[RMDB]
RNA sequence: GGGAACGACUCGAGUAGAGUCGAAAAUAACAUGGCCACUUGUUUUAGAAUGCACUAGGGCAUCCACUUCUGCCGUUAAGUUGCAAAAUAAUGAGAUCAAACCUUCAGGUCUAAAAACCAUGGUUGUACACGACGGACUUCGGUCCGUCGAAAAGAAACAACAACAACAAC
Reactivity to 2A3 in 0.01 (KOAc 150mM, MgCl2 10mM, bicine 150mM(pH8.5), 24C), signal-to-noise 2, nucleotides 027 to 129: u050a000a050c010a020u000g000g000c000c000a050c060u110u160g130u140u120u010u000a050g150a140a030u060g000c000a000c000u020a020g000g000g000c000a000u060c000c060a040c000u070u050c170u170g120c030c000g080u000u110a120a000g020u060u010g050c070a000a000a110a000u240a170a060u150g050a000g000a030u220c130a160a000a000c060c000u060u160c120a000g000g000u020c150u240a040a040a040a000a000c040c040a020u100g000g000u000u020g000u010a110c050a000
Reactivity to DMS in 0.01 (KOAc 150mM, MgCl2 10mM, bicine 150mM(pH8.5), 24C), signal-to-noise 4, nucleotides 027 to 129: u000a040a000c030a000u050g000g020c060c050a140c150u000u000g050u080u020u090u040a130g040a060a220u000g050c030a030c010u030a240g000g060g030c010a000u000c010c030a190c190u000u030c000u070g000c080c020g010u090u010a000a070g000u020u080g050c180a100a030a060a050u030a090a100u010g000a110g000a060u060c110a070a080a200c120c010u070u050c130a050g030g020u060c050u060a000a040a060a250a070c120c000a070u010g000g010u000u000g010u050a010c130a070
Structure probing data (2A3 and DMS) for a 170-nucleotide construct. It was measured as part of the RMDB library 15KLIB. Reactivities are rounded to 0.1 and cut off at 0 and 3. For DMS, 4,140 sequencing reads were counted. The reactions ran in a buffer of 150 mM KOAc, 10 mM MgCl2 and 150 mM bicine (pH 8.5), at 24 C. Reactivities are given for positions 27 through 129.